[RMDB]
RNA sequence: GGGAACGACUCGAGUAGAGUCGAAAACUGUCGUGACGGACACCCGAGUAGCAGCGGGCCCGUGAAAUCUGCUGUGAAUCUGUCGGGACCACCCGAUAAGCCUGAAUACUCCCUGGUGACCGAUAGCGUAAUGGCUUUUGUUCGCAAAAGCCAUUACAAAAGAAACAACAACAACAAC
Reactivity to DMS in 0.01 (KOAc 150mM, MgCl2 10mM, bicine 150mM(pH8.5), 24C), signal-to-noise 3, nucleotides 027 to 126: c110u000g010u020c010g000u010g000a090c100g000g000a090c040a120c020c010c150g000a060g020u010a200g000c040a020g000c030g000g000g000c020c030c060g010u010g020a040a060a110u020c030u000g030c030u000g000u010g010a070a120u040c020u000g020u020c020g000g000g000a080c160c300a060c000c000c020g010a040u030a020a130g000c080c030u010g000a120a060u000a110c030u000c020c020c020u000g000g000u000g010a060c070c020g000a060u010a050g020c270
Reactivity to 2A3 in 0.01 (KOAc 150mM, MgCl2 10mM, bicine 150mM(pH8.5), 24C), signal-to-noise 5, nucleotides 027 to 126: c040u040g040u090c030g080u080g110a050c040g030g000a030c030a010c020c010c020g000a020g000u040a010g000c030a000g020c010g000g010g000c000c070c020g030u040g070a090a090a020u030c010u020g020c000u000g010u020g030a050a040u050c050u050g040u020c000g010g000g050a140c050c060a120c020c030c000g010a020u040a120a040g030c000c040u030g050a080a010u060a110c010u030c000c000c060u070g020g030u020g040a050c010c030g050a070u090a010g130c090